This 207-nucleotide RNA was probed chemically with 2A3 and DMS.
The DMS profile rests on 3,922 reads.
2A3 is a SHAPE reagent: it acylates the 2'-hydroxyl of flexible nucleotides of all four kinds.
Source: RMDB library OK3TST, as collected in RNAgym.
The RNA was probed in 150 mM KOAc, 10 mM MgCl2 and 150 mM bicine (pH 8.5) at 24 C.
RNA sequence: GGGAACGACUCGAGUAGAGUCGAAAAUGCAAAUCAGAAUGACUCAAUGGAUUAUGAUAAUCUUACGUUUACAUGCACACAAAACAACAUUACACUGUGGAAUGUUUUGGAACGAAAUUCCGGAAUCUAUUGUGAGAUCCAAUCGUCAUUAAGUACACUUUCUAUCUCGUUUCGACGAGAUAGAAAGAAAAGAAACAACAACAACAAC
Reactivity to 2A3 in 0.01 (KOAc 150mM, MgCl2 10mM, bicine 150mM(pH8.5), 24C), signal-to-noise 8, nucleotides 027 to 156: u130g010c020a010a010a130u080c030a060g130a120a030u030g020a030c010u010c090a020a050u050g000g020a010u030u060a090u190g090a080u090a120a060u050c070u110u110a070c050g030u030u040u070a080c040a030u070g060c100a030c020a000c020a050a060a080a040c040a090a000c010a040u070u210a100c080a050c160u070g020u070g080g030a160a060u040g040u030u140u100u080g040g000a040a030c040g050a090a030a090u150u040c060c020g060g020a040a020u020c040u050a040u080u100g040u030g060a060g010a050u010c000c010a020a020u040c050g040u020c010a030u050u050a050a030g100u090a030c040a000
Reactivity to DMS in 0.01 (KOAc 150mM, MgCl2 10mM, bicine 150mM(pH8.5), 24C), signal-to-noise 3, nucleotides 027 to 156: u000g040c060a060a080a150u000c070a160g000a110a070u000g010a060c040u010c080a090a170u000g010g000a030u000u000a120u000g030a140u000a050a050u000c040u010u000a100c110g020u020u010u010a080c070a070u000g000c030a100c050a170c070a030a040a060a090c030a050a030c040a100u010u000a060c080a140c140u020g040u010g010g020a040a010u020g010u000u000u000u010g000g000a010a080c040g020a100a020a300u000u000c000c010g010g000a020a030u000c080u000a070u000u000g020u000g000a040g010a100u010c010c020a060a050u000c050g000u000c030a030u000u010a060a060g000u000a040c080a100